[RMDB]
RNA sequence: GGGAACGACUCGAGUAGAGUCGAAAACAUUUGUAGCUGGAAAGUGUAAGGGCCGGUUCCAGAGGUUUGCACUGUAGCAGUCCAUUGUGAUGACAAGAUCCUGGAAUUCAUCAUGAGACAGAGUGAAUUAUGUGGAGAAGGAAAGUGAAAACAAGAACAUUUAUGAUUAGUUCGCUAAUCAUAAAUGAAAAGAAACAACAACAACAAC
Reactivity to DMS in 0.01 (KOAc 150mM, MgCl2 10mM, bicine 150mM(pH8.5), 24C), signal-to-noise 4, nucleotides 027 to 156: c060a130u000u000u010g020u010a090g020c000u010g020g010a120a070a090g010u010g010u000a080a100g010g020g050c040c040g030g020u000u000c050c030a150g030a080g020g010u000u000u000g020c020a100c040u010g020u010a070g040c040a100g010u010c020c080a140u010u010g000u000g010a070u010g020a140c090a120a070g000a060u000c010c010u010g010g010a050a160u000u000c030a060u010c040a080u000g010a090g020a240c060a130g010a130g030u010g010a070a150u000u000a050u010g030u000g020g000a100g000a060a110g000g010a050a050a050g020u000g000a040a040a060a060c050a060a070g000a070a230
Reactivity to 2A3 in 0.01 (KOAc 150mM, MgCl2 10mM, bicine 150mM(pH8.5), 24C), signal-to-noise 5, nucleotides 027 to 156: c020a020u090u070u170g040u060a040g000c030u030g030g030a100a070a080g040u070g010u190a050a080g020g030g040c040c050g070g000u050u050c030c010a030g030a060g060g020u060u100u100g010c030a020c050u040g010u040a010g030c020a010g020u020c010c020a030u030u120g020u060g060a080u070g020a020c040a080a020g000a020u000c000c010u010g020g000a020a000u070u010c010a040u010c000a030u110g050a010g020a090c070a030g030a010g030u030g020a020a010u090u030a030u120g060u030g030g020a050g020a050a020g050g000a060a090a020g020u040g060a010a050a030a020c040a040a010g090a070a010
The record gives the reactivity of an RNA of 207 nucleotides to DMS and 2A3. It was measured as part of the RMDB library OK3TST. The RNA was probed in 150 mM KOAc, 10 mM MgCl2 and 150 mM bicine (pH 8.5) at 24 C. For 2A3 the reverse transcriptase was SuperScript II with manganese.